[RMDB]
RNA sequence: GGGAACGACUCGAGUAGAGUCGAAAAGACAGGGUUCACGCCAUUCAAUCUAUAAAUCGACAGCGACGUUCUGCCGGGAUACCGACGGAAUUUCAGACAAGCCAAAGGGUAAUAGCUUUGGUUGACCAUAUAUAUUUUUUUUCGAAAAAAUAUAUAUAAAAGAAACAACAACAACAAC
Reactivity to DMS in 0.01 (KOAc 150mM, MgCl2 10mM, bicine 150mM(pH8.5), 24C), signal-to-noise 1, nucleotides 027 to 126: g000a120c040a040g020g020g000u010u010c000a070c060g000c030c030a070u000u000c100a080a070u000c070u040a070u010a070a130a180u050c060g000a030c060a060g000c000g000a080c010g000u010u000c000u000g000c000c000g000g000g000a160u040a080c080c020g010a040c050g020g000a040a000u010u010u010c030a080g040a130c180a050a070g010c000c000a000a000a010g000g010g060u010a130a090u040a300g000c000u030u000u000g000g000u000u010g010a050c130c050
Reactivity to 2A3 in 0.01 (KOAc 150mM, MgCl2 10mM, bicine 150mM(pH8.5), 24C), signal-to-noise 1, nucleotides 027 to 126: g060a020c060a050g040g000g040u090u130c060a010c060g030c000c010a040u080u060c050a040a140u000c020u140a070u100a300a100a070u150c050g050a020c010a040g030c000g050a070c000g060u010u010c010u010g040c020c000g060g010g000a120u080a130c000c020g070a040c000g000g050a020a020u020u000u060c030a040g010a050c030a050a000g000c000c000a000a000a050g050g000g030u040a040a060u010a050g030c000u010u000u000g040g000u010u010g010a010c000c000